[RMDB]
RNA sequence: GGGAACGACUCGAGUAGAGUCGAAAAGAUAUGGAGUCCCAUGUGGGAGAAGGCACUCGGAAACGAGUGGCUUCAUCGAUCACAGGGACUCCUAAGUCAAACCCCGUAAUGUUCGCAUUACGGGGAAGUCAGUAACAUGGUUCGCCAUGUUACUGACAAAAGAAACAACAACAACAAC
Reactivity to 2A3 in 0.01 (KOAc 150mM, MgCl2 10mM, bicine 150mM(pH8.5), 24C), signal-to-noise 3, nucleotides 027 to 126: g020a000u030a030u070g000g000a000g010u020c000c030c050a140u040g040u000g000g210g050a240g000a070a020g070g060c000a000c000u010c010g010g010a000a020a020c010g000a000g010u010g020g020c010u010u000c010a010u120c090g200a170u170c000a000c000a000g010g010g000a000c000u000c000c000u000a000a000g000u000c010a030a050a300c000c010c000c000g000u000a010a000u020g030u090u100c300g030c160a000u000u000a000c000g000g000g010g000a000a000
Reactivity to DMS in 0.01 (KOAc 150mM, MgCl2 10mM, bicine 150mM(pH8.5), 24C), signal-to-noise 2, nucleotides 027 to 126: g010a010u020a200u030g000g000a010g020u000c000c000c000a070u000g010u000g020g060g010a160g010a010a000g000g020c000a000c010u000c000g030g000a030a050a060c000g040a020g000u000g010g000c000u000u000c000a160u000c280g010a140u010c000a010c010a030g020g000g020a000c010u000c010c010u000a000a040g000u000c010a160a130a220c000c000c000c000g000u010a010a000u000g010u010u030c300g010c010a020u020u000a010c000g010g020g000g000a000a010
The record gives the reactivity of an RNA of 177 nucleotides to 2A3 and DMS.
For 2A3 the reverse transcriptase was SuperScript II with manganese.
As a SHAPE reagent, 2A3 marks flexible, mostly unpaired nucleotides at the ribose 2'-OH.